This 177-nucleotide RNA was probed chemically with 2A3 and DMS. The reactions ran in a buffer of 150 mM KOAc, 10 mM MgCl2 and 150 mM bicine (pH 8.5), at 24 C. The data come from the RNA Mapping Database (RMDB), library OK2TST. The 2A3 profile rests on 4,098 reads.
RNA sequence: GGGAACGACUCGAGUAGAGUCGAAAAUGACUAUUAAUAGUUGCUUGAGGGGAACAUAUAGUCAAGACCCCGUCCACAUGCUCCGCAGAUCUCGGGGCUGCUCAGCCAGCACAUUAGGUCAUGCUGACCAACGGUAUUGAUUCGUCAAUACCGUUGGAAAAGAAACAACAACAACAAC
Reactivity to 2A3 in 0.01 (KOAc 150mM, MgCl2 10mM, bicine 150mM(pH8.5), 24C), signal-to-noise 3, nucleotides 027 to 126: u020g000a000c010u000a030u140u140a130a170u090a170g050u030u060g100c020u050u050g090a130g040g050g000g040a020a010c030a020u050a000u020a050g020u020c010a000a040g060a080c000c000c010c010g050u050c050c010a120c020a100u120g060c010u010c020c010g010c030a050g040a230u030c030u030c060g020g010g010g000c000u000g010c010u030c030a020g070c040c000a010g020c020a020c000a070u110u140a050g000g010u040c050a090u110g010c020u050g010a040
Reactivity to DMS in 0.01 (KOAc 150mM, MgCl2 10mM, bicine 150mM(pH8.5), 24C), signal-to-noise 5, nucleotides 027 to 126: u000g010a020c000u000a020u010u000a080a080u000a120g000u000u000g010c030u000u010g000a140g030g010g010g010a050a040c050a100u000a030u000a020g000u000c010a040a090g000a240c090c010c010c050g020u000c050c050a110c150a060u010g000c050u010c030c030g030c120a070g000a050u000c100u000c090g010g010g010g020c010u000g000c060u000c100a080g010c090c020a050g010c030a040c110a110u000u000a060g020g010u000c050a070u000g020c070u000g010a220